[RMDB]
RNA sequence: GGGAACGACUCGAGUAGAGUCGAAAAGUCGCACGCCAUCCUUCUUGGCGAUAUCCAUCACAGGGCCGCCUUGCAGUCGCGGAUCAGCUGUUCGAGCCAAGCUGUGCGAGCCGCCAUCGACGCAUUCUCACAUACUAGAGUUCGCUCUAGUAUGUGAAAAAGAAACAACAACAACAAC
Reactivity to DMS in 0.01 (KOAc 150mM, MgCl2 10mM, bicine 150mM(pH8.5), 24C), signal-to-noise 9, nucleotides 027 to 126: g020u000c040g010c090a120c060g010c050c050a090u000c090c070u010u010c050u000u000g020g010c020g000a080u010a060u010c050c050a070u010c150a080c100a100g000g010g000c060c030g010c020c050u010u010g010c070a070g010u000c080g010c050g000g010a150u000c070a070g020c020u000g000u000u000c100g010a140g000c040c040a070a080g000c080u010g010u000g010c030g010a070g000c050c040g000c020c040a070u000c070g000a060c070g010c090a110u010u000c090
Reactivity to 2A3 in 0.01 (KOAc 150mM, MgCl2 10mM, bicine 150mM(pH8.5), 24C), signal-to-noise 8, nucleotides 027 to 126: g050u020c020g000c030a030c020g030c020c040a090u060c060c030u100u100c030u030u040g020g000c010g010a020u040a050u100c050c020a050u090c050a030c020a060g040g030g000c000c000g000c000c020u050u130g050c080a070g040u110c020g010c050g070g020a130u070c030a020g090c010u040g040u110u120c060g040a020g030c020c020a050a010g020c060u070g010u030g040c010g020a020g040c020c020g020c010c000a100u100c040g050a030c030g010c050a050u140u060c020